[RMDB]
RNA sequence: GGGAACGACUCGAGUAGAGUCGAAAAGACCAGAACUUCGGUUCUGGUCAAAAAAGCGUACUACAUGUGGGCUAGCUCUGGAUCCCAAAUAGGAUCCUAGAGCUUGGACCCGUAACAUCAUGUAUCGCAAAAAGUAGGGGAGUUCGCUCCCCUACAAGAUAUGUCAUGUCUUCGGACAUGACAUAUCAAAAGAAACAACAACAACAAC
Reactivity to 2A3 in 0.01 (KOAc 150mM, MgCl2 10mM, bicine 150mM(pH8.5), 24C), signal-to-noise 1, nucleotides 027 to 156: g030a000c000c000a000g040a000a000c000u040u090c160g040g000u000u000c000u000g020g000u000c000a000a040a070a070a000a000g070c080g040u170a140c080u020a010c020a020u030g040u060g040g000g030c010u020a000g020c000u000c000u010g010g000a010u040c050c030c020a120a270a130u260a120g000g000a000u010c000c000u000a000g020a000g000c000u000u020g000g030a080c000c000c000g000u010a010a080c000a100u260c000a000u030g000u020a010u300c040g000c040a040a080a000a060a000g010u000a010g000g000g000g010a000g000u010u050c120g080c030u000c000c020c000c000u000a000c020a000a000
Reactivity to DMS in 0.01 (KOAc 150mM, MgCl2 10mM, bicine 150mM(pH8.5), 24C), signal-to-noise 1, nucleotides 027 to 156: g000a020c000c000a020g020a000a020c000u000u000c300g070g000u000u000c000u020g040g000u010c010a000a000a030a060a060a140g010c020g000u000a080c060u000a090c070a020u000g000u000g020g000g000c010u000a040g040c000u000c020u010g020g000a020u000c010c000c000a000a110a170u000a060g000g000a010u000c020c000u010a010g040a020g020c020u000u020g120g000a110c000c010c020g000u010a120a130c120a050u000c050a050u000g040u010a020u000c050g060c040a140a090a080a130a090g000u010a020g000g000g000g050a060g050u010u020c160g000c040u010c000c000c000c000u010a010c050a010a300